[RMDB]
RNA sequence: GGGAACGACUCGAGUAGAGUCGAAAAAGCCGGUCUACGGACCGGCAAAACGUUCAUCUCGUUUUGCGGGCCGCAUUAAGAUUGAAGCCAAGGAACGGGGACUUCAGACUACGACUACGGUCGUAGAUUACGCCUCCGAGUUUCGACUCGGAGGCAAACAUGAGUUUUAGUUCGCUAAAACUCAUGUAAAAGAAACAACAACAACAAC
Reactivity to 2A3 in 0.01 (KOAc 150mM, MgCl2 10mM, bicine 150mM(pH8.5), 24C), signal-to-noise 2, nucleotides 027 to 156: a000g020c000c000g000g040u010c010u020a100c250g130g000a040c000c000g030g020c000a000a000a000a010c090g040u120u060c060a120u020c090u010c000g020u000u000u020u110g010c020g000g030g000c000c030g010c110a110u200u130a110a070g040a160u040u090g010a090a010g010c000c020a050a050g070g010a020a040c020g000g000g000g060a020c000u080u050c080a060g000a100c000u000a010c000g010a000c000u000a000c210g090g010u000c000g000u010a000g000a000u070u070a050c100g010c000c000u000c000c000g000a000g000u010u100u070c090g090a020c020u000c000g000g010a000g000g000c000a000a000
Reactivity to DMS in 0.01 (KOAc 150mM, MgCl2 10mM, bicine 150mM(pH8.5), 24C), signal-to-noise 2, nucleotides 027 to 156: a190g010c020c010g020g000u000c000u000a100c210g050g010a020c010c010g000g020c000a010a010a020a070c080g030u000u010c130a110u000c060u000c030g030u000u000u000u000g000c090g000g020g010c030c010g000c070a090u000u000a110a130g020a230u000u000g020a050a020g010c000c020a030a130g010g020a050a050c090g010g000g000g050a100c030u000u000c040a100g010a240c010u000a030c010g010a020c000u000a120c260g070g000u000c000g010u010a010g010a070u000u000a060c090g000c030c000u010c000c000g030a090g030u000u000u000c270g010a050c020u010c010g000g010a010g010g000c000a000a010
Record summary
Conditions: 150 mM KOAc, 10 mM MgCl2 and 150 mM bicine (pH 8.5), 24 C. This 207-nucleotide RNA was probed chemically with 2A3 and DMS. Values cover nucleotides 27 to 156. Source: RMDB library M2RFPK, as collected in RNAgym. The 2A3 profile rests on 1,356 reads. DMS adducts were read by reverse transcription with MarathonRT.